This 207-nucleotide RNA was probed chemically with 2A3 and DMS. For 2A3 the reverse transcriptase was SuperScript II with manganese.

RNA sequence: GGGAACGACUCGAGUAGAGUCGAAAAAUACAUACUGACACCGGUUGCUCAACAGGCUGUGUGGUACAAUAGAAUAACAAGGCUGUCAAUUUGAGCUUGACGGCUGCAAACCGAAUGGAGUGAAAUCGUAACCGGACUCACUUCGGUGAGUCCGGAACCAUCUUCCUAGAUUCGUCUAGGAAGAUGGAAAAGAAACAACAACAACAAC
Reactivity to 2A3 in 0.01 (KOAc 150mM, MgCl2 10mM, bicine 150mM(pH8.5), 24C), signal-to-noise 2, nucleotides 027 to 156: a010u090a020c060a010u090a020c020u080g060a020c020a020c070c020g040g030u040u060g030c040u040c090a070a050c030a100g100g000c040u040g010u030g030u060g090g000u050a020c030a030a080u090a130g080a070a090u180a150a070c050a140a000g060g000c000u000g030u050c010a010a040u090u030u200g040a020g050c000u010u000g000a000c010g000g000c000u040g000c030a030a100a080c020c060g070a060a070u120g060g000a020g070u060g070a070a090a040u150c070g010u070a030a060c000c000g000g010a010c000u000c000a000c020u020u080c150g090g000u010g010a000g010u000c000c000g000g000a000a000
Reactivity to DMS in 0.01 (KOAc 150mM, MgCl2 10mM, bicine 150mM(pH8.5), 24C), signal-to-noise 2, nucleotides 027 to 156: a160u000a100c040a100u010a200c020u000g030a160c020a070c030c010g000g030u000u000g000c030u000c050a100a130c100a110g000g000c030u000g000u000g040u000g030g010u000a100c050a060a120u000a080g020a180a140u010a060a120c070a080a230g030g030c020u010g020u000c010a020a060u010u010u000g000a200g020c300u000u000g010a090c020g020g000c000u000g020c080a040a080a060c040c030g000a070a190u000g000g010a140g000u000g020a100a060a120u010c100g010u000a110a120c020c020g000g010a050c010u010c020a000c000u000u000c280g050g030u020g000a060g040u000c000c000g000g000a000a050